[RMDB]
RNA sequence: GGGAACGACUCGAGUAGAGUCGAAAAGCCCGAAAGUUCGCUUUCGGGCAAAAGAAAGCUCCUGCGGGAGCAAAGCACAGGCAGAAAAACAGUGCAAAAGCAAAAGUACCGUGUUCGCACGGUACAAGUAUGCUGAUAAGUUCGCUUAUCAGCAUACAAAAGAAACAACAACAACAAC
Reactivity to 2A3 in 0.01 (KOAc 150mM, MgCl2 10mM, bicine 150mM(pH8.5), 24C), signal-to-noise 2, nucleotides 027 to 126: g000c000c010c020g010a000a000a020g030u100u180c190g040c200u010u020u000c000g020g000g000c000a000a000a000a000g000a020a030a000g000c000u010c010c000u050g000c190g040g030g010a020g030c030a050a070a000g020c000a000c000a030g090g150c040a020g230a080a140a030a030a010c020a010g030u010g020c030a060a070a000a030g080c050a080a100a030a070g000u010a000c000c000g010u000g030u030u090c200g030c080a010c000g010g000u010a000c000a010a000
Reactivity to DMS in 0.01 (KOAc 150mM, MgCl2 10mM, bicine 150mM(pH8.5), 24C), signal-to-noise 2, nucleotides 027 to 126: g020c000c000c010g000a020a000a030g000u000u010c200g030c000u010u020u000c000g020g010g000c000a000a020a020a070g000a140a230a160g000c000u000c010c000u000g020c130g010g000g020a020g010c000a020a010a100g010c010a030c030a060g030g010c070a080g010a060a070a130a090a060c080a110g000u010g000c100a130a070a050a130g000c190a090a060a080a110g000u000a010c000c000g040u000g010u010u000c190g030c000a010c000g000g020u000a000c000a020a030